[RMDB]
RNA sequence: GGGAACGACUCGAGUAGAGUCGAAAACGCGUCAUGUUCGCAUGACGCGCAUUAGCGAGAAAGGAGCUCGGUAUAAAACUCCAACCCUUGGAAACAAGGGAAAACCGAUAGUAUUCGUACUAUCGAAUAUUUGACAUCUGUUCGCAGAUGUCAAAUAAAAAGAAACAACAACAACAAC
Reactivity to 2A3 in 0.01 (KOAc 150mM, MgCl2 10mM, bicine 150mM(pH8.5), 24C), signal-to-noise 1, nucleotides 027 to 126: c010g010c000g010u010c000a020u000g010u040u020c100g000c130a010u000g020a000c000g020c000g020c000a030u000u200a070g000c000g040a010g000a070a250a180g020g010a010g000c000u000c050g010g030u130a060u030a120a080a030a030c030u020c000c000a030a030c040c010c000u000u000g000g020a050a060a040c000a000a000g000g010g040a100a000a000a000c020c010g000a010u000a010g000u000a000u070u020c260g020u030a000c010u000a000u050c000g000a080a040
Reactivity to DMS in 0.01 (KOAc 150mM, MgCl2 10mM, bicine 150mM(pH8.5), 24C), signal-to-noise 1, nucleotides 027 to 126: c030g020c000g000u000c010a000u000g000u000u020c200g000c000a010u000g000a020c000g030c000g030c030a040u010u000a110g000c020g000a010g000a000a070a140g000g000a010g000c010u000c000g020g010u020a030u010a010a010a010a050c010u000c000c020a170a300c000c000c010u000u000g000g000a140a060a270c000a010a010g000g000g000a040a030a100a110c120c030g000a000u010a000g000u000a040u000u020c170g010u000a000c000u010a010u010c000g000a070a070
The record gives the reactivity of an RNA of 177 nucleotides to 2A3 and DMS. Values cover nucleotides 27 to 126. Conditions: 150 mM KOAc, 10 mM MgCl2 and 150 mM bicine (pH 8.5), 24 C. It was measured as part of the RMDB library M2PK50. For DMS the reverse transcriptase was MarathonRT. For 2A3, 1,151 sequencing reads were counted.